[RMDB]
RNA sequence: GGGAACGACUCGAGUAGAGUCGAAAAACGGUUCGCUUCAAAAUCGCGUGUUUGUUAAGGAUGAACUUUCAAAACGUCGACUGGCCGUGGCAAGCAACAUUGAGGCGUACCUUAAUCAGGGGUAUAACCAUUUUAAUGCUUUCGAGCAUUAAAAUGGAAAAGAAACAACAACAACAAC
Reactivity to 2A3 in 0.01 (KOAc 150mM, MgCl2 10mM, bicine 150mM(pH8.5), 24C), signal-to-noise 4, nucleotides 027 to 126: a000c040g010g010u030u040c010g020c020u010u020c010a080a100a080a240u140c070g000c050g110u020g100u020u030u010g060u030u040a050a030g040g020a050u150g110a120a100c000u040u100u040c090a070a080a050a050c050g080u070c030g110a060c080u070g130g000c010c010g030u030g020g010c010a010a020g000c000a010a040c020a060u000u030g000a010g010g000c010g010u020a010c010c000u020u030a040a050u080c040a020g000g070g000g040u100a070u060a170a060
Reactivity to DMS in 0.01 (KOAc 150mM, MgCl2 10mM, bicine 150mM(pH8.5), 24C), signal-to-noise 5, nucleotides 027 to 126: a130c270g010g010u000u000c020g020c040u000u010c030a020a020a130a150u010c120g010c080g020u000g020u000u000u010g020u010u010a070a060g000g000a180u010g000a130a140c060u000u000u000c120a060a050a080a060c150g000u020c030g020a090c080u000g010g020c020c070g010u000g030g000c050a060a060g010c050a060a040c110a160u010u000g010a030g010g010c010g010u000a000c010c010u000u000a060a070u010c120a120g010g010g000g010u000a080u000a100a220

Annotation:
Conditions: 150 mM KOAc, 10 mM MgCl2 and 150 mM bicine (pH 8.5), 24 C. This 177-nucleotide RNA was probed chemically with 2A3 and DMS. For DMS, 4,386 sequencing reads were counted. Reactivities are rounded to 0.1 and cut off at 0 and 3. For 2A3 the reverse transcriptase was SuperScript II with manganese.